The record gives the reactivity of an RNA of 177 nucleotides to 2A3 and DMS.
The reactions ran in a buffer of 150 mM KOAc, 10 mM MgCl2 and 150 mM bicine (pH 8.5), at 24 C.
Values cover nucleotides 27 to 126.
Values are in units of 0.01, from 0 to 300, in steps of 10.
RNA sequence: GGGAACGACUCGAGUAGAGUCGAAAAUCGCCGAAAGACCAGGAUGAUGUAGCUAAUAGACUCUAUCAGAAGUCUGGGCAAACGAUUCCUGGGUCGACCAAACUUGGACGACCUAGACCGACUGAUAUCCAAUGUGGUCCUUCGGGACCACAUUGGAAAAAGAAACAACAACAACAAC
Reactivity to 2A3 in 0.01 (KOAc 150mM, MgCl2 10mM, bicine 150mM(pH8.5), 24C), signal-to-noise 2, nucleotides 027 to 126: u000c010g040c000c000g050a030a110a080g000a040c040c000a040g000g000a040u050g000a000u020g040u080a080g000c000u050a050a030u050a250g000a050c000u000c020u160a080u030c060a020g160a300a000g080u000c000u000g000g010g010c070a150a000a050c060g060a120u070u000c000c000u000g000g000g000u030c000g000a020c000c000a090a060a140c190u160u180g010g000a060c060g000a040c000c000u050a030g030a020c010c000g020a050c010u050g050a040u010a000
Reactivity to DMS in 0.01 (KOAc 150mM, MgCl2 10mM, bicine 150mM(pH8.5), 24C), signal-to-noise 2, nucleotides 027 to 126: u000c000g000c000c010g050a030a040a090g010a150c060c040a140g040g000a060u000g000a260u000g040u010a100g030c040u000a060a120u040a050g000a130c010u000c010u000a070u000c140a090g020a220a040g040u000c000u000g020g000g120c000a130a130a080c070g000a130u010u010c040c000u020g010g000g040u010c000g030a010c000c050a030a070a060c220u060u060g030g050a100c010g000a000c070c030u000a070g020a120c040c070g000a090c100u020g000a080u000a150